[RMDB]
RNA sequence: GGGAACGACUCGAGUAGAGUCGAAAAGAUAUGGACAGACGCUUUCCGUUUGACGCUGCUCGGAAACGAGCAGCCGAGGAAAGAACUACGUCGUGUCCUAAGUCAAACGUCGGGUUCGCCCGACGAACUGUAAAGAUAGCUUCGGCUAUCUUUACAGAAAAGAAACAACAACAACAAC
Reactivity to 2A3 in 0.01 (KOAc 150mM, MgCl2 10mM, bicine 150mM(pH8.5), 24C), signal-to-noise 3, nucleotides 027 to 126: g020a020u110a030u180g000g000a000c010a010g000a000c020g000c020u020u010u000c010c010g080u140u180u290g010a030c030g000c010u000g010c000u000c010g020g020a100a090a070c010g000a000g000c000a000g000c010c000g010a020g000g040a020a020a010g030a030a050c080u200a050c050g000u020c050g060u020g000u020c010c000u030a110a020g040u000c040a130a000a080c020g000u000c000g010g000g040u060u060c300g090c050c000c020g000a000c000g000a020a020
Reactivity to DMS in 0.01 (KOAc 150mM, MgCl2 10mM, bicine 150mM(pH8.5), 24C), signal-to-noise 6, nucleotides 027 to 126: g000a040u010a300u010g000g000a000c000a120g000a000c000g000c020u000u000u000c000c010g010u010u000u020g030a170c300g010c000u000g000c000u000c000g010g000a100a090a170c010g000a020g010c000a000g010c000c000g010a050g000g000a020a010a010g020a060a050c110u010a300c010g000u000c000g000u000g020u000c000c000u020a040a090g020u000c040a110a100a230c010g010u000c000g010g000g010u010u020c290g020c000c010c010g010a010c000g000a020a090

Source information
The record gives the reactivity of an RNA of 177 nucleotides to 2A3 and DMS. Reactivities are given for positions 27 through 126. The DMS profile rests on 7,535 reads.